[RMDB]
RNA sequence: GGGAACGACUCGAGUAGAGUCGAAAACAUGUACGCUUCAAGUGCGGCGGUCGGCCAGAGUCGACAGGCUCCCUAGCGCGUAGGACGUCCGAUGGGGAUGACAUCGUGGUGGUGUGCCGCGCCACCGUCUUGGGUGGGUCUUCGGGCCUACUCAAGAAAAAGAAACAACAACAACAAC
Reactivity to DMS in 0.01 (KOAc 150mM, MgCl2 10mM, bicine 150mM(pH8.5), 24C), signal-to-noise 9, nucleotides 027 to 126: c070a080u020g010u010a040c060g010c030u000u020c120a080a090g020u020g010c020g000g000c010g010g010u000c010g000g000c010c140a120g010a100g020u000c010g000a040c090a010g010g010c040u000c000c010c010u000a070g010c170g010c050g020u010a070g010g010a160c020g000u010c050c020g000a080u010g000g010g000g000a070u020g010a090c080a050u020c090g010u010g010g010u000g000g010u000g000u020g010c010c020g010c040g000c000c000a010c000c010g010
Reactivity to 2A3 in 0.01 (KOAc 150mM, MgCl2 10mM, bicine 150mM(pH8.5), 24C), signal-to-noise 9, nucleotides 027 to 126: c040a030u090g020u080a020c020g010c030u050u090c070a070a030g050u020g030c010g010g000c000g020g010u010c000g000g000c010c030a040g020a040g040u010c000g010a020c010a010g040g010c000u000c000c000c000u010a020g010c010g000c010g040u020a040g040g090a040c020g030u020c010c010g050a090u100g030g000g020g050a050u070g020a020c010a070u060c050g060u040g010g010u010g000g000u030g020u060g020c000c010g000c000g000c000c000a000c000c000g010
Record summary
An RNA of 177 nucleotides, treated with DMS and 2A3 and read out base by base. Values are in units of 0.01, from 0 to 300, in steps of 10. The 2A3 profile rests on 47,008 reads. The DMS profile rests on 119,424 reads. For DMS the reverse transcriptase was MarathonRT.